[RMDB]
RNA sequence: GGGAACGACUCGAGUAGAGUCGAAAAUCGAGCCGGGUCUUGCAUCGGGUUGGCUCAUCCUGAGACCGGGGAGCUUCGACGAUCUCUUGUCUCUCCUGAAGGAGGAAGGAGCUCUCGAACGCUCUCCAAACUCGUAGGUUCGCCUACGAGAAAAGAAACAACAACAACAAC
Reactivity to DMS in 0.01 (KOAc 150mM, MgCl2 10mM, bicine 150mM(pH8.5), 24C), signal-to-noise 7, nucleotides 027 to 129: u070c070g030a100g010c000c000g010g030g010u020c060u040u020g050c070a040u030c050g020g000g000u000u000g000g000c070u000c030a040u030c020c020u010g030a160g020a080c160c080g000g000g030g040a000g010c010u010u000c010g020a040c160g030a000u020c000u000c000u020u030g060u030c030u050c010u000c030c020u070g080a150a140g010g000a020g010g000a100a020g020g010a000g010c080u010c000u020c000g000a020a030c130g030c030u030c000u020c000c010a030a020a070
Reactivity to 2A3 in 0.01 (KOAc 150mM, MgCl2 10mM, bicine 150mM(pH8.5), 24C), signal-to-noise 9, nucleotides 027 to 129: u130c040g000a000g020c000c010g030g030g110u030c060u080u170g090c030a070u070c040g140g020g000u040u040g020g000c010u000c010a050u030c010c010u060g060a050g040a090c060c060g000g000g000g000a000g000c000u000u000c010g010a040c140g000a020u000c000u000c000u040u050g280u110c040u020c000u030c120c020u170g200a270a150g010g000a000g000g010a010a010g010g000a000g000c000u000c000u000c000g000a020a010c100g000c000u010c000u000c000c000a000a000a000

An RNA of 170 nucleotides, treated with DMS and 2A3 and read out base by base. 2A3 adducts were read by reverse transcription with SuperScript II with manganese.